[RMDB]
Chemical mapping of a 177-nucleotide RNA with 2A3 and DMS. The DMS profile rests on 920 reads. 2A3 is a SHAPE reagent: it acylates the 2'-hydroxyl of flexible nucleotides of all four kinds. 2A3 adducts were read by reverse transcription with SuperScript II with manganese.
RNA sequence: GGGAACGACUCGAGUAGAGUCGAAAAGUGUACAUGUGCCGCGCCGUCAAUCCACUGGGUGAGGCAGUAACCACCGCCUCUAUGCGCGUGGUAUCUGAGGCCAGCAUCCAAAUGGAUACUCAACAUCAGCCGUAGGAAUGUUCGCAUUCCUACGGCUAAAAGAAACAACAACAACAAC
Reactivity to 2A3 in 0.01 (KOAc 150mM, MgCl2 10mM, bicine 150mM(pH8.5), 24C), signal-to-noise 1, nucleotides 027 to 126: g090u070g010u090a050c020a100u070g040u050g080c000c030g000c020g010c020c000g030u030c040a040a060u010c040c000a010c060u030g010g000g010u020g000a040g000g130c000a010g000u000a010a030c020c010a000c000c010g020c030c040u190c060u160a100u300g000c020g020c020g010u020g000g000u000a020u000c010u010g040a120g150g030c060c000a090g020c020a000u020c000c000a000a240a020u090g000g000a020u050a120c110u060c080a050a050c020a120u080c050
Reactivity to DMS in 0.01 (KOAc 150mM, MgCl2 10mM, bicine 150mM(pH8.5), 24C), signal-to-noise 2, nucleotides 027 to 126: g030u000g000u020a050c090a100u000g000u020g030c020c020g000c060g000c020c030g040u000c130a110a120u000c080c020a050c100u010g000g030g030u010g000a180g000g000c020a050g020u000a160a120c040c040a030c000c010g050c000c220u010c290u010a060u000g020c020g030c220g010u000g000g000u000a070u000c090u000g010a170g000g010c050c000a040g000c010a010u000c020c000a030a070a140u000g000g000a020u000a060c130u000c060a130a150c160a070u000c170